An RNA of 177 nucleotides, treated with DMS and 2A3 and read out base by base. For 2A3 the reverse transcriptase was SuperScript II with manganese.
[RMDB]
RNA sequence: GGGAACGACUCGAGUAGAGUCGAAAAUCGCGUUCGCCACCAUCGCCGGCCCCAAGGAUCUGCAGUUCAACCCCAGCACGGUGGGGCCCGUCGUCAAGGGGGUGACGGUUAAGAUCCUCGACGAGAAUACCUUUUAUGCAUUCGUGCAUAAAAGGUAAAAAGAAACAACAACAACAAC
Reactivity to DMS in 0.01 (KOAc 150mM, MgCl2 10mM, bicine 150mM(pH8.5), 24C), signal-to-noise 5, nucleotides 027 to 126: u000c070g010c050g020u000u000c040g010c000c010a070c060c030a100u000c030g010c030c030g010g010c030c010c020c040a100a050g000g000a040u000c040u010g020c060a100g000u000u000c040a070a080c030c010c020c000a150g000c150a030c040g010g010u000g010g010g010g010c180c020c020g010u000c060g010u000c070a140a160g000g020g000g010g030u000g010a020c000g010g010u000u000a070a050g010a050u000c000c000u010c060g010a050c090g010a140g000a150a150
Reactivity to 2A3 in 0.01 (KOAc 150mM, MgCl2 10mM, bicine 150mM(pH8.5), 24C), signal-to-noise 3, nucleotides 027 to 126: u040c000g000c010g100u070u080c010g030c020c020a030c030c020a060u050c020g020c020c020g010g050c030c010c010c000a020a020g060g010a040u000c010u020g030c050a040g000u090u080c050a080a090c010c020c000c000a000g000c040a010c030g030g030u060g030g030g020g000c040c000c000g010u010c010g010u040c040a140a180g010g000g030g010g010u000g020a000c010g000g000u170u050a050a010g020a030u000c010c010u030c050g080a060c020g040a030g070a140a050
Values cover nucleotides 27 to 126. The reactions ran in a buffer of 150 mM KOAc, 10 mM MgCl2 and 150 mM bicine (pH 8.5), at 24 C.